[RMDB]
RNA sequence: GGGAACGACUCGAGUAGAGUCGAAAAGACUCGGCGAAUGUCUUGUCGGAAGACAUUGAUCAGGAAGCCUUCCACUUUUAUUCCACCGUACUCAAUGGCGUACCUGAGCAAAGAGAGCGCUGGGAGCUAUAAAAGGACGAUUCGUCGUCCUUUUAUAAAAAGAAACAACAACAACAAC
Reactivity to 2A3 in 0.01 (KOAc 150mM, MgCl2 10mM, bicine 150mM(pH8.5), 24C), signal-to-noise 4, nucleotides 027 to 126: g050a020c020u010c040g010g000c010g010a040a020u020g010u000c010u020u040g220u140c090g050g060a010a000g000a000c010a010u030u060g020a050u080c020a010g000g030a040a020g010c010c000u060u040c040c010a070c030u120u140u050u080a180u150u020c020c030a060c020c060g060u090a060c050u060c100a070a180u130g020g000c010g010u070a100c000c010u020g010a020g010c010a010a120a000g080a040g010a010g000c000g010c010u010g010g010g040a040g050c030
Reactivity to DMS in 0.01 (KOAc 150mM, MgCl2 10mM, bicine 150mM(pH8.5), 24C), signal-to-noise 9, nucleotides 027 to 126: g010a130c020u000c020g010g010c030g000a120a050u000g000u000c010u000u000g020u010c180g010g020a060a030g000a010c000a030u000u000g010a050u000c020a030g000g010a180a300g010c010c010u000u000c040c050a090c090u000u000u010u000a140u010u010c040c030a100c090c070g000u000a060c090u010c100a080a110u010g010g010c020g010u010a160c020c010u000g000a040g000c020a010a050a190g010a150g010a250g010c010g000c030u000g000g010g010a130g010c130